[RMDB]
This 177-nucleotide RNA was probed chemically with DMS and 2A3.

RNA sequence: GGGAACGACUCGAGUAGAGUCGAAAAUCGGUGUGGAGAAGGAGGUGCCAAGUAGCCCCGUUGCGGAGAGUGUGUCAGCCCCAUCGCAGUGCACCUCACUGCCCUCCCGCUUCCCCGGCCACUUGGCCUAGUACCAGAUAUUCGUAUCUGGUACUAGAAAAGAAACAACAACAACAAC
Reactivity to DMS in 0.01 (KOAc 150mM, MgCl2 10mM, bicine 150mM(pH8.5), 24C), signal-to-noise 9, nucleotides 027 to 126: u020c070g010g010u010g010u010g010g000a060g010a090a050g000g000a030g010g020u000g020c010c060a070a110g020u010a120g000c020c010c030c080g010u000u010g010c050g010g000a080g010a070g010u010g000u000g010u010c090a100g000c040c010c020c040a070u010c080g010c060a060g010u020g010c090a040c050c050u010c010a050c020u010g000c100c050c010u000c070c000c010g000c120u000u000c020c010c010c220g000g000c010c020a120c140u010u020g010g010c030
Reactivity to 2A3 in 0.01 (KOAc 150mM, MgCl2 10mM, bicine 150mM(pH8.5), 24C), signal-to-noise 9, nucleotides 027 to 126: u120c030g000g010u060g040u140g050g030a060g010a080a080g030g020a020g010g020u030g010c010c000a070a030g050u050a030g040c010c000c010c010g030u050u070g010c030g010g030a070g000a040g130u080g000u030g040u100c040a040g030c010c010c010c000a050u080c040g000c040a020g020u040g090c020a030c020c010u020c010a070c020u020g010c010c000c000u010c010c010c000g000c000u010u010c010c000c000c000g010g000c010c010a140c130u130u230g010g000c000
For 2A3 the reverse transcriptase was SuperScript II with manganese.
Conditions: 150 mM KOAc, 10 mM MgCl2 and 150 mM bicine (pH 8.5), 24 C.